[RMDB]
The record gives the reactivity of an RNA of 177 nucleotides to DMS and 2A3.
For DMS the reverse transcriptase was MarathonRT.
High DMS reactivity at an A or C suggests that its Watson-Crick edge is free.

RNA sequence: GGGAACGACUCGAGUAGAGUCGAAAAGAUAUGGAUCGAUGAAGUUCAUCGAUCACCACCAUUCGGAAACGAAUGUUGGUGGGAGAACCAUCGAUCCUAAGUCAAAAGAUCACCUUCGGGUGAUCAAGCUAUACUGUGGGUUCGCCCACAGUAUAGCAAAAGAAACAACAACAACAAC
Reactivity to DMS in 0.01 (KOAc 150mM, MgCl2 10mM, bicine 150mM(pH8.5), 24C), signal-to-noise 3, nucleotides 027 to 126: g000a020u010a300u000g000g000a020u000c000g010a040u000g000a210a220g010u000u000c010a280u010c180g000a160u010c010a010c000c000a000c020c010a020u010u010c000g010g010a110a060a210c000g000a010a010u000g000u000u000g000g020u000g000g010g010a150g000a010a040c010c000a010u000c000g000a010u000c000c000u000a000a080g000u000c030a080a130a130a120g000a000u000c000a010c010c000u000u010c250g040g000g040u010g000a000u000c000a050a080
Reactivity to 2A3 in 0.01 (KOAc 150mM, MgCl2 10mM, bicine 150mM(pH8.5), 24C), signal-to-noise 4, nucleotides 027 to 126: g000a000u040a000u110g000g010a000u010c030g000a000u010g180a300a180g040u040u020c050a200u300c300g230a190u130c000a000c000c000a000c000c000a010u010u000c010g000g020a040a040a010c010g000a000a010u010g020u010u040g010g020u000g020g070g060a300g010a010a000c000c000a000u000c000g000a000u000c000c000u000a010a010g010u000c000a070a050a030a160g020a000u000c000a000c000c000u040u100c300g160g000g000u000g000a000u010c000a000a000